[RMDB]
RNA sequence: GGGAACGACUCGAGUAGAGUCGAAAAGUCUAGCGAUUUAGGGAUCCGAUCCGGGUUGCAGAACUCAACUGCAUGAGUAGACACGCAAGUCGCGUAUUGGCCGACCGGCCAAGGAUCUGCUAGACGAGGAUUAUACCCACUUCGGUGGGUAUAAUCCAAAAGAAACAACAACAACAAC
Reactivity to DMS in 0.01 (KOAc 150mM, MgCl2 10mM, bicine 150mM(pH8.5), 24C), signal-to-noise 2, nucleotides 027 to 126: g000u000c010u000a040g000c030g000a160u000u030u000a230g040g000g010a030u000c010c010g020a140u000c060c030g000g000g000u000u000g000c060a130g010a040a040c040u000c080a030a150c120u010g020c130a100u000g000a100g010u000a130g010a150c290a040c090g010c040a120a160g000u020c130g020c060g010u010a130u010u010g000g000c010c030g020a140c160c130g000g000c050c040a010a050g020g000a000u010c000u010g010c000u000a010g000a010c000g000a060
Reactivity to 2A3 in 0.01 (KOAc 150mM, MgCl2 10mM, bicine 150mM(pH8.5), 24C), signal-to-noise 2, nucleotides 027 to 126: g010u000c000u020a000g010c000g100a120u060u130u240a190g020g050g030a010u000c010c020g010a040u020c030c010g030g090g030u040u000g000c000a000g010a100a030c010u040c130a070a060c100u190g010c060a050u020g000a000g010u100a050g000a000c060a030c090g000c020a050a070g300u130c030g010c010g000u070a080u110u120g030g040c000c000g060a170c060c120g020g040c030c010a030a030g000g000a000u000c070u110g000c000u000a000g020a000c000g000a030

Structure probing data (DMS and 2A3) for a 177-nucleotide construct. The RNA was probed in 150 mM KOAc, 10 mM MgCl2 and 150 mM bicine (pH 8.5) at 24 C.